Chemical mapping of a 177-nucleotide RNA with 2A3. The reactions ran in a buffer of 150 mM KOAc, 10 mM MgCl2 and 150 mM bicine (pH 8.5), at 24 C. 2A3 adducts were read by reverse transcription with SuperScript II with manganese. The 2A3 profile rests on 1,214 reads.

RNA sequence: GGGAACGACUCGAGUAGAGUCGAAAAACACACACGUAUUAAAACACAAAUAUAUCACAAAUCCGCGAAAACAACAAUAACAAGUCUCUUUUUUUAUGUUUUCUCUAAGACUCGUUCAAUUUUUAUCCCACCUGAUGAGUUUCGACUCAUCAGGUGGAAAAGAAACAACAACAACAAC
Reactivity to 2A3 in 0.01 (KOAc 150mM, MgCl2 10mM, bicine 150mM(pH8.5), 24C), signal-to-noise 3, nucleotides 027 to 126: a000c040a000c000a010c010a000c060g090u090a130u050u300a160a060a130a000c160a020c070a050a190a000u200a020u070a030u220c070a060c030a110a160a010u080c020c040g010c010g100a000a100a030a030c050a060a000c010a040a140u110a110a010c060a090a040g050u040c030u010c030u150u070u060u000u000u010u070a050u180g090u000u070u060u020c010u030c020u060a060a000g010a040c000u000c070g080u120u030c050a150a120u040u000u000u150u200a110u160c000